[RMDB]
RNA sequence: GGGAACGACUCGAGUAGAGUCGAAAAGAUAUGGAACCCAUACUUCGCAUGGAGGUCUCGGAAACGAGUCUCCAUGAACUACGAAGAUGGGUUCCUAAGUCAAAACUCGAGUGUUCGCACUCGAGAACACAAGGCAAUACUUCGGUAUUGCCUUGUGAAAAGAAACAACAACAACAAC
Reactivity to DMS in 0.01 (KOAc 150mM, MgCl2 10mM, bicine 150mM(pH8.5), 24C), signal-to-noise 3, nucleotides 027 to 126: g000a030u000a300u010g040g000a000a010c000c000c000a010u000a150c020u000u000c010g020c010a000u000g000g020a020g000g020u000c000u000c000g020g010a100a100a190c020g010a010g000u000c000u020c030c000a000u000g010a030a040c140u010a300c020g000a000a000g020a060u000g020g000g020u000u000c000c000u000a010a070g010u010c020a070a080a070a150c000u010c000g030a010g000u000g000u010u000c230g010c000a030c000u000c000g000a000g010a030a150
Reactivity to 2A3 in 0.01 (KOAc 150mM, MgCl2 10mM, bicine 150mM(pH8.5), 24C), signal-to-noise 2, nucleotides 027 to 126: g000a000u040a030u130g000g030a000a010c000c010c040a010u100a300c060u010u010c020g000c090a010u000g000g010a010g010g100u140c010u010c050g050g000a110a100a070c020g000a000g040u020c000u040c000c000a010u000g000a000a000c030u190a060c020g010a000a010g000a010u000g000g000g000u010u000c010c000u010a000a000g020u000c000a000a010a080a130c000u010c000g010a000g010u010g030u050u090c240g010c080a000c000u000c000g000a010g020a020a000